This 177-nucleotide RNA was probed chemically with DMS and 2A3. It was measured as part of the RMDB library M2PK50.

RNA sequence: GGGAACGACUCGAGUAGAGUCGAAAAGGGCGAUCCUUCGGGAUCGCCCAAAUAAAGGCAGUCGAGUGCAAGAAGCUCAGUCAAUAACUGACGCCACGACAAAAAGUACAUGGUUCGCCAUGUACAACAAUUCCCCUAUCUUCGGAUAGGGGAAUUGAAAAGAAACAACAACAACAAC
Reactivity to DMS in 0.01 (KOAc 150mM, MgCl2 10mM, bicine 150mM(pH8.5), 24C), signal-to-noise 2, nucleotides 027 to 126: g000g000g000c020g060a010u000c030c000u000u010c210g030g020g050a020u010c010g000c010c000c010a000a000a050u010a060a130a160g000g020c100a010g010u000c070g000a120g010u000g040c020a140a140g000a100a080g010c140u010c020a030g020u000c070a130a100u010a070a140c010u000g000a030c080g020c000c070a120c050g000a010c080a070a070a050a090a070g000u000a000c030a000u020g010g000u010u000c300g020c000c000a000u000g000u000a000c010a110a100
Reactivity to 2A3 in 0.01 (KOAc 150mM, MgCl2 10mM, bicine 150mM(pH8.5), 24C), signal-to-noise 1, nucleotides 027 to 126: g000g000g040c040g000a000u010c100c110u210u230c300g040g090g020a000u030c000g030c000c000c000a000a000a000u010a010a010a010g100g000c030a000g030u070c040g040a040g000u130g110c070a140a090g070a050a000g110c000u010c030a030g030u010c090a040a110u080a300a030c020u000g010a000c030g030c040c010a010c040g050a010c050a040a210a000a010a020g000u010a010c000a010u000g000g010u010u040c130g060c040c010a020u010g010u010a000c000a000a000